[RMDB]
RNA sequence: GGGAACGACUCGAGUAGAGUCGAAAAGAAUCGCAAAUCAAAAAGCGAAAUUAAUUAUACCCAUCGCAGAACGCAGCGAAAUCGAGGCGUGCUGAGCCUCCCAAGGGAUCAAUCAGUGCAAAGUCGCCCCGCUCGGACUAUUCGUAGUCCGAGCGGGAAAAGAAACAACAACAACAAC
Reactivity to 2A3 in 0.01 (KOAc 150mM, MgCl2 10mM, bicine 150mM(pH8.5), 24C), signal-to-noise 1, nucleotides 027 to 126: g080a030a000u000c010g000c030a000a000a180u120c100a150a090a270a090a000g000c000g130a040a040a040u240u160a000a000u170u010a080u030a180c000c000c000a010u050c010g020c040a040g030a000a010c010g000c110a040g000c010g070a040a000a000u300c140g000a000g000g000c000g120u030g000c000u040g050a000g080c000c000u080c020c060c030a000a090g170g000g000a000u120c010a040a000u000c000a090g050u040g080c010a030a030a030g110u000c040g090c120

This 177-nucleotide RNA was probed chemically with 2A3. The reactions ran in a buffer of 150 mM KOAc, 10 mM MgCl2 and 150 mM bicine (pH 8.5), at 24 C. It was measured as part of the RMDB library OK1LIB. 2A3 adducts were read by reverse transcription with SuperScript II with manganese. For 2A3, 338 sequencing reads were counted.